[RMDB]
RNA sequence: GGGAACGACUCGAGUAGAGUCGAAAAGAUAUGGACCUAGCCGAGGCUGACAGGCGAAGAACUCGGAAACGAGGGAGCCUGUCAAGGCUAUCUAGGUCCUAAGUCAAAACGAUGCUUCGGCAUCGAAUCGACAGUUAGGGUUCGCCCUAACUGUCGAAAAAGAAACAACAACAACAAC
Reactivity to DMS in 0.01 (KOAc 150mM, MgCl2 10mM, bicine 150mM(pH8.5), 24C), signal-to-noise 2, nucleotides 027 to 126: g000a070u000a300u000g010g020a030c000c000u000a020g010c250c140g010a070g000g010c010u010g000a020c050a020g000g020c000g000a080a090g010a130a230c000u000c000g020g000a120a140a140c010g010a040g010g010g000a180g010c000c000u000g000u000c010a020a010g020g010c020u000a050u060c000u000a010g000g010u000c010c000u000a010a150g010u000c020a030a060a100a230c020g000a030u000g030c000u000u030c190g000g000c000a010u010c000g000a120a050
Reactivity to 2A3 in 0.01 (KOAc 150mM, MgCl2 10mM, bicine 150mM(pH8.5), 24C), signal-to-noise 1, nucleotides 027 to 126: g050a010u120a100u150g010g000a000c000c000u010a000g130c120c080g290a030g080g190c010u020g010a010c000a010g000g030c030g040a210a060g000a040a020c010u000c020g010g040a090a070a020c020g010a000g000g020g000a010g000c050c030u000g000u000c000a030a000g050g000c010u000a010u020c000u000a030g030g030u000c010c000u010a070a030g070u020c020a010a000a030a190c010g000a000u000g010c000u060u070c240g150g000c000a000u000c010g010a040a110
Structure probing data (DMS and 2A3) for a 177-nucleotide construct.
Reactivities are given for positions 27 through 126.
For 2A3 the reverse transcriptase was SuperScript II with manganese.
It was measured as part of the RMDB library TTRDEL.